[RMDB]
RNA sequence: GGGAACGACUCGAGUAGAGUCGAAAAUUCGCGUGAUUCGUCACGCGAAGAUUACCGAGAACCGUGCUCGGUAUAAACAUGGAACCCUUGGAAUCAAGGGAAAUAGGCAGGCCUUCGGGCCUGCCAAUCAUUACACCUGUUUCGACAGGUGUAAUGAAAAAGAAACAACAACAACAAC
Reactivity to DMS in 0.01 (KOAc 150mM, MgCl2 10mM, bicine 150mM(pH8.5), 24C), signal-to-noise 4, nucleotides 027 to 126: u000u000c000g020c010g030u010g010a010u000u010c160g030u000c000a000c000g020c010g000a000a010g000a160u010u000a090c000c000g000a020g010a110a230c080c110g020u020g010c000u000c000g000g020u000a020u000a060a060a120c220a080u000g000g010a170a200c010c000c000u000u010g000g010a180a130u010c010a000a000g000g010g010a010a060a070u010a100g020g000c010a000g000g000c000c010u000u010c190g010g040g010c000c000u010g000c010c010a000a030
Reactivity to 2A3 in 0.01 (KOAc 150mM, MgCl2 10mM, bicine 150mM(pH8.5), 24C), signal-to-noise 2, nucleotides 027 to 126: u020u000c010g000c000g020u010g040a050u030u070c140g020u020c110a000c010g000c020g000a000a000g000a000u020u060a030c000c000g000a000g000a060a100c080c080g090u090g020c000u000c000g000g000u030a010u040a010a010a000c030a030u090g070g080a060a090c000c020c000u000u010g090g060a260a150u300c010a000a010g000g010g020a000a070a020u050a000g020g000c000a010g000g020c020c000u090u190c230g060g000g000c000c040u010g010c020c020a010a000
Chemical mapping of a 177-nucleotide RNA with DMS and 2A3.
The RNA was probed in 150 mM KOAc, 10 mM MgCl2 and 150 mM bicine (pH 8.5) at 24 C.
The 2A3 profile rests on 2,510 reads.
It was measured as part of the RMDB library M2PK50.